[RMDB]
RNA sequence: GGGAACGACUCGAGUAGAGUCGAAAAUUAGUAUUAAAGUCUUAUUCAGGCUCAUUCGGGUUGAAGACAUUGUCAGAUGGGGAGUUUGGCUGGGGCGGCACAUCUGUUAAAUAAUAACGCAGGUGUCAUUCGGAAUGAAGUUCGCUUCAUUCCGAAUAAAAGAAACAACAACAACAAC
Reactivity to DMS in 0.01 (KOAc 150mM, MgCl2 10mM, bicine 150mM(pH8.5), 24C), signal-to-noise 2, nucleotides 027 to 126: u020u030a030g030u010a120u000u040a090a150a140g010u060c030u020u010a060u000u020c060a280g010g030c010u010c040a040u000u020c020g010g000g020u000u040g000a110a110g000a090c020a060u000u000g000u030c140a070g050a140u030g020g000g010g000a040g000u050u000u010g010g010c050u000g000g000g010g000c120g000g020c100a030c020a030u000c000u000g000u000u000a040a040a160u050a100a140u010a090a110c290g000c040a020g000g000u000g010u010c080
Reactivity to 2A3 in 0.01 (KOAc 150mM, MgCl2 10mM, bicine 150mM(pH8.5), 24C), signal-to-noise 3, nucleotides 027 to 126: u050u000a000g070u060a080u170u260a190a060a000g050u010c000u020u070a080u030u040c050a030g010g000c000u020c000a010u040u040c010g000g000g000u010u030g040a050a010g040a030c070a070u000u210g040u080c040a000g020a120u090g010g000g010g010a030g050u020u080u110g060g000c040u020g060g000g000g000c030g020g040c000a000c000a030u020c020u000g010u030u050a100a110a050u200a050a090u130a080a030c060g000c020a000g000g080u000g010u030c020
Annotation:
The record gives the reactivity of an RNA of 177 nucleotides to DMS and 2A3. The RNA was probed in 150 mM KOAc, 10 mM MgCl2 and 150 mM bicine (pH 8.5) at 24 C. Reactivities are given for positions 27 through 126.